[RMDB]
RNA sequence: GGGAACGACUCGAGUAGAGUCGAAAAGAACACGUCUCGGGACGACGCUAAACUCGCCUUGGUCGGGAUGGGUUUAACGACCCCUCGGGUUUCCUAGUUCCUAAAACUAGGUGGUGGAGUCAUAUAAAAAACUUCUACACGUUCGCGUGUAGAAGAAGCUUUGCUUUUAGUUCGCUAAAAGCAAAGCAAAAGAAACAACAACAACAAC
Reactivity to 2A3 in 0.01 (KOAc 150mM, MgCl2 10mM, bicine 150mM(pH8.5), 24C), signal-to-noise 1, nucleotides 027 to 156: g010a070a000c080a000c080g000u000c030u020c000g040g040g000a100c300g020a020c020g080c120u050a030a070a030c010u010c050g100c050c080u060u120g110g000u030c000g050g010g020a060u080g040g000g030u050u010u080a060a030c060g020a000c000c000c000c010u050c020g040g020g000u000u000u020c000c000u000a020g000u000u070c010c050u010a080a000a000a000c000u000a000g060g000u010g060g020u020g020g060a080g040u060c060a060u160a020u300a200a110a080a000a000a060c000u000u020c000u010a000c010a010c000g000u090u060c280g000c000g050u000g000u000a000g010a000a000g000a000a010
Annotation: The record gives the reactivity of an RNA of 207 nucleotides to 2A3. Conditions: 150 mM KOAc, 10 mM MgCl2 and 150 mM bicine (pH 8.5), 24 C. The 2A3 profile rests on 731 reads. Reactivities are given for positions 27 through 156. Source: RMDB library M2RFPK, as collected in RNAgym.